Description:
This 207-nucleotide RNA was probed chemically with 2A3. The RNA was probed in 150 mM KOAc, 10 mM MgCl2 and 150 mM bicine (pH 8.5) at 24 C. For 2A3 the reverse transcriptase was SuperScript II with manganese. The data come from the RNA Mapping Database (RMDB), library OK3TST. The 2A3 profile rests on 367 reads.
RNA sequence: GGGAACGACUCGAGUAGAGUCGAAAACAUGGUAUGGCCUCGCAUCCGGCCUACCCACAGAAUCAACAACUUCGGAUGCGGUGGGCGAGAGCCCUAAGAAGGAGUCUCCACGCCUGGGGAGCUCCGUAUGACUUAAUGUAUUACCAGGCGAAUACAACAGGACCCUAUGAUUCGUCAUAGGGUCCUGAAAAGAAACAACAACAACAAC
Reactivity to 2A3 in 0.01 (KOAc 150mM, MgCl2 10mM, bicine 150mM(pH8.5), 24C), signal-to-noise 1, nucleotides 027 to 156: c080a040u200g020g000u080a150u300g000g000c000c000u000c050g000c000a000u000c000c000g000g050c000c010u060a060c050c000c000a140c070a080g210a120a130u270c020a050a150c010a020a080c140u300u210c050g000g000a000u000g000c000g000g060u000g000g000g000c010g020a060g000a080g120c000c000c000u000a000a120g040a060a020g000g000a000g060u120c010u020c010c000a040c050g000c000c000u070g000g020g010g010a000g000c000u000c000c020g000u050a110u080g190a040c000u160u280a110a020u070g230u200a130u090u250a040c000c010a000g000g000c000g000a000a000u010a010c040a110a000